This 207-nucleotide RNA was probed chemically with 2A3.
RNA sequence: GGGAACGACUCGAGUAGAGUCGAAAAACGUCGGCAGGCGAUGACUGUGACCUGUCGGUGUAUUGCAGUCUACCAAAGCGAGGGGCGUGUCUGUUUGCCCGUGCGGAGGGAAACGGCGCAAGCCGAAAUAACCGACUAGACUCGUAGAAAUUCGCGUCGAUCUAACAAUGUUCGCAUUGUUAGAUCGAAAAGAAACAACAACAACAAC
Reactivity to 2A3 in 0.01 (KOAc 150mM, MgCl2 10mM, bicine 150mM(pH8.5), 24C), signal-to-noise 2, nucleotides 027 to 156: a000c030g050u000c000g000g000c000a010g010g000c040g080a030u040g020a000c020u030g010u010g040a090c000c000u010g050u020c020g000g000u070g010u020a150u040u270g000c010a000g000u000c010u030a010c000c000a040a030a000g010c000g010a040g000g010g010g000c010g020u050g060u060c030u050g070u060u040u080g020c000c000c000g010u020g000c000g010g010a000g010g000g000a020a040a030c030g020g000c010g020c020a010a050g010c010c000g010a000a040a000u030a010a020c020c000g010a000c010u000a020g040a090c020u000c030g010u020a040g070a080a110a060u120u070c020g000c000g090u000
The RNA was probed in 150 mM KOAc, 10 mM MgCl2 and 150 mM bicine (pH 8.5) at 24 C.
For 2A3, 1,914 sequencing reads were counted.